[RMDB]
RNA sequence: GGGAACGACUCGAGUAGAGUCGAAAAUGUCCAGUCCCUCCCCGCUCCUGGAGAAGGGAGACUCGGGAACGCCUAGCAUCUGAGGGACGAAGCCGCCCCCGGGCGCUCCCCUCGGAGGUCCACUGGGAACCACAAACGUUCGCGUUUGUGAAAAGAAACAACAACAACAAC
Reactivity to DMS in 0.01 (KOAc 150mM, MgCl2 10mM, bicine 150mM(pH8.5), 24C), signal-to-noise 9, nucleotides 027 to 129: u040g000u050c000c010a030g010u000c020c020c010u010c010c000c040c080g010c040u000c010c040u010g010g000a110g000a120a120g000g000g000a010g030a140c060u020c040g000g040g000a040a080c160g000c040c020u010a100g030c130a060u010c030u040g030a050g010g000g030a100c120g000a070a220g000c080c040g020c010c020c000c050c100g030g000g010c030g030c050u020c000c000c000c000u020c010g000g000a010g000g040u000c060c070a110c060u040g020g010g020a090a070c060
Reactivity to 2A3 in 0.01 (KOAc 150mM, MgCl2 10mM, bicine 150mM(pH8.5), 24C), signal-to-noise 9, nucleotides 027 to 129: u110g040u010c000c000a000g020u000c000c000c000u010c010c000c000c010g020c010u020c010c020u090g100g070a150g040a130a110g040g020g010a010g010a020c040u020c050g000g010g020a040a030c030g020c010c010u030a040g040c020a100u020c040u060g020a070g020g020g000a010c050g030a050a010g050c080c040g020c010c010c000c010c020g030g000g000c040g020c010u010c000c000c000c000u000c000g000g000a010g000g020u040c040c020a070c060u050g020g010g030a040a040c020